RNA sequence: GGGAACGACUCGAGUAGAGUCGAAAAAUGUUGGCUUUAUUGGCUUGUCCCACAGCCCAGUCCUCAAAUACCAUCCUUUCUUCUCUCUGUAUACUCACUCCUUGGAUGAUGUCAUUCACUCUCUUGGCAUUAUAUACACCAAGACACCCACCACACACCCGCUCCAUAUAUUCGUAUAUGGAGCGGGAAAAGAAACAACAACAACAAC
Reactivity to 2A3 in 0.01 (KOAc 150mM, MgCl2 10mM, bicine 150mM(pH8.5), 24C), signal-to-noise 1, nucleotides 027 to 156: a000u170g000u080u100g000g000c000u080u090u060a060u070u140g020g040c030u040u090g050u070c050c030c000a040c060a000g020c000c000c000a010g020u030c040c020u050c090a090a090a050u090a010c000c030a030u070c010c000u090u060u000c030u070u020c010u010c000u000c020u030g080u050a020u040a090c030u070c020a060c020u010c010c030u000u040g010g000a020u020g010a020u050g060u030c020a040u010u060c020a030c070u150c010u000c020u030u020g030g000c000a010u120u040a010u030a040u070a030c030a020c020c030a010a010g000a020c010a030c000c000c000a010c000c090a050c020a020c010a000